Chemical mapping of a 177-nucleotide RNA with DMS and 2A3. Conditions: 150 mM KOAc, 10 mM MgCl2 and 150 mM bicine (pH 8.5), 24 C. It was measured as part of the RMDB libraries RFM100 and RFMREP.

RNA sequence: GGGAACGACUCGAGUAGAGUCGAAAAACGGCACUCUACGGAGUGCCGAUGGGUCACGGUGCUUAGUCCUUCCAACAGUCGGUAAUGACUAGAACCGUGACUCAGCACGGUGGCUACGGCCACCGAAACGUCUCAUUUGUUUCGACAAAUGAGACGUAAAAGAAACAACAACAACAAC
Reactivity to DMS in 0.01 (KOAc 150mM, MgCl2 10mM, bicine 150mM(pH8.5), 24C), signal-to-noise 2, nucleotides 027 to 126: a160c010g020g010c000a020c000u000c000u000a140c130g000g000a020g000u010g000c000c000g000a010u000g000g000g020u000c000a000c000g000g000u000g000c140u000u020a020g010u010c020c120u010u010c000c020a090a200c200a170g000u030c220g000g010u020a010a000u000g000a030c000u000a020g020a050a010c010c000g000u000g010a000c010u000c010a000g020c160a180c020g030g000u000g010g010c020u000a120c210g040g000c000c010a000c000c000g010a010a050
Reactivity to 2A3 in 0.01 (KOAc 150mM, MgCl2 10mM, bicine 150mM(pH8.5), 24C), signal-to-noise 6, nucleotides 027 to 126: a000c010g000g000c000a010c010u000c010u040a070c300g100g000a000g000u000g000c000c000g000a010u000g000g010g000u010c000a000c000g000g010u010g020c040u040u060a010g000u000c010c020u030u040c020c000a140a070c090a300g300u270c170g020g080u260a040a030u040g000a000c000u000a010g000a040a000c000c000g000u000g000a000c000u000c000a000g010c040a020c010g020g000u000g000g000c010u040a050c240g080g000c000c000a000c000c000g000a030a020